Structure probing data (DMS and 2A3) for a 177-nucleotide construct. For DMS the reverse transcriptase was MarathonRT. Reactivities are given for positions 27 through 126. 2A3 adducts were read by reverse transcription with SuperScript II with manganese.

[RMDB]
RNA sequence: GGGAACGACUCGAGUAGAGUCGAAAAAACAGAGAAAUCACCUCCAGAGGACCCCUUCAGCGAACAGAAGGGCACUGAGCCGUCAGGGUAAGACCAUAGCGAUAGGUGGAGAUGCUAGGAGUUAGAGCAUACUGUACCACUUCGGUGGUACAGUAUGAAAAGAAACAACAACAACAAC
Reactivity to DMS in 0.01 (KOAc 150mM, MgCl2 10mM, bicine 150mM(pH8.5), 24C), signal-to-noise 2, nucleotides 027 to 126: a070a040c070a110g010a140g010a100a070a070u000c050a080c070c030u010c030c010a140g010a070g010g000a170c200c040c000c030u010u000c020a060g000c060g000a040a030c100a050g000a040a010g000g010g020c120a040c020u000g000a090g020c060c030g010u010c040a040g010g000g000u020a040a060g000a070c050c020a090u010a070g000c060g000a110u000a070g000g010u000g000g010a050g000a060u010g010c010u000a050g000g010a090g020u010u000a080g010a080g010
Reactivity to 2A3 in 0.01 (KOAc 150mM, MgCl2 10mM, bicine 150mM(pH8.5), 24C), signal-to-noise 1, nucleotides 027 to 126: a000a010c070a000g030a000g010a070a100a080u030c020a040c020c020u040c020c010a050g020a040g090g070a110c030c000c000c000u010u010c040a030g000c000g050a020a000c010a060g060a090a000g060g020g000c010a040c040u040g020a030g050c060c010g080u090c040a020g020g020g020u070a060a010g020a050c000c030a060u100a050g050c040g080a050u070a090g000g040u030g000g040a040g000a010u040g010c030u060a040g070g020a050g000u060u110a020g000a000g100